Structure probing data (2A3 and DMS) for a 207-nucleotide construct.

RNA sequence: GGGAACGACUCGAGUAGAGUCGAAAAGUCGAUAGUGCAGAGGGUGUUGAUGGUAAUGAAACACUCCUUCGACAGAAACAUAUAGAUAUGAUAUCUAUAGAAGAUCAUGAUAGUGCCACAAAAAUUACAUCAUGGAACGAAUUUAUGAUUAAAAACCCAAGAUGUUGAGUUUCGACUCAACAUCUUGAAAAGAAACAACAACAACAAC
Reactivity to 2A3 in 0.01 (KOAc 150mM, MgCl2 10mM, bicine 150mM(pH8.5), 24C), signal-to-noise 4, nucleotides 027 to 156: g010u010c000g020a040u150a060g120u110g200c130a060g050a110g060g000g010u030g020u020u030g040a090u090g030g120u120a110a090u110g080a030a020a020c020a000c020u090c030c000u020u020c000g010a020c010a030g080a040a070a000c030a020u040a000u020a040g000a020u060a090u230g040a050u120a010u160c020u010a020u030a030g050a160a030g020a070u070c000a000u020g050a010u030a090g050u040g080c040c020a060c060a010a160a040a020a020u120u120a050c010a020u080c030a020u030g030g000a050a020c000g020a030a010u070u080u040a080u090g030a010u030u150a060a080a050a010a010c000c020
Reactivity to DMS in 0.01 (KOAc 150mM, MgCl2 10mM, bicine 150mM(pH8.5), 24C), signal-to-noise 2, nucleotides 027 to 156: g020u020c020g020a100u000a080g030u000g010c130a200g020a140g020g010g030u000g020u020u000g010a210u000g030g000u000a080a140u000g000a300a050a020c020a040c000u000c020c010u000u010c010g020a150c020a170g000a180a080a160c060a130u000a020u000a050g000a040u000a100u020g010a300u000a040u000c000u000a020u000a030g020a160a200g010a070u000c000a010u000g010a010u000a090g010u000g000c020c000a040c080a030a060a050a060a140u010u000a030c080a050u000c110a040u000g020g030a020a030c020g000a130a120u010u010u000a010u010g000a030u000u000a010a070a040a090a070c070c070
The RNA was probed in 150 mM KOAc, 10 mM MgCl2 and 150 mM bicine (pH 8.5) at 24 C.